Structure probing data (2A3 and DMS) for a 207-nucleotide construct. 2A3 adducts were read by reverse transcription with SuperScript II with manganese. For DMS the reverse transcriptase was MarathonRT. The data come from the RNA Mapping Database (RMDB), library OK3TST.
[RMDB]
RNA sequence: GGGAACGACUCGAGUAGAGUCGAAAAUGGAUUAUUUCAUAGCAAAGGAUAGGUGAACGUAAUCAAGUCUUCUUGUGAUGCCUGAAUCUAGCCUUCAAGUUAUAAGACGUAAGCGUGAAUUUUUCUUAGACUGAUAAUCAUCAUGAUUUUGAUAAGAAAUAGGCUCAAGGUUCGCCUUGAGCCUAUUAAAAGAAACAACAACAACAAC
Reactivity to 2A3 in 0.01 (KOAc 150mM, MgCl2 10mM, bicine 150mM(pH8.5), 24C), signal-to-noise 2, nucleotides 027 to 156: u140g000g040a010u020u000a050u050u110u040c020a010u090a030g000c020a000a080a020g070g010a040u010a000g000g040u010g030a070a000c030g050u080a090a050u050c040a070a000g080u070c090u180u030c010u020u190g010u020g030a020u160g020c000c020u040g020a030a000u030c030u020a010g020c010c000u010u100c040a070a000g050u040u000a130u100a260a130g050a000c080g050u110a190a000g040c010g000u000g060a030a020u050u040u000u010u050c000u000u030a040g000a180c060u050g030a100u100a130a010u040c100a030u000c010a070u040g130a160u000u290u180u130g080a070u200a130a040g030a010
Reactivity to DMS in 0.01 (KOAc 150mM, MgCl2 10mM, bicine 150mM(pH8.5), 24C), signal-to-noise 1, nucleotides 027 to 156: u030g000g030a100u000u000a010u000u000u020c020a140u000a100g060c050a190a100a100g000g020a080u030a070g050g060u000g010a130a060c170g000u000a060a280u000c040a040a100g000u000c050u010u000c030u000u000g040u000g020a110u000g050c030c050u010g030a120a060u000c020u010a070g020c020c020u000u000c060a060a100g000u000u000a080u010a020a140g040a050c040g020u010a060a170g030c040g010u000g050a110a180u000u000u030u000u010c010u000u010a100g000a270c020u020g020a150u000a050a070u000c040a110u000c110a150u030g000a190u000u020u020u000g010a100u000a010a130g010a050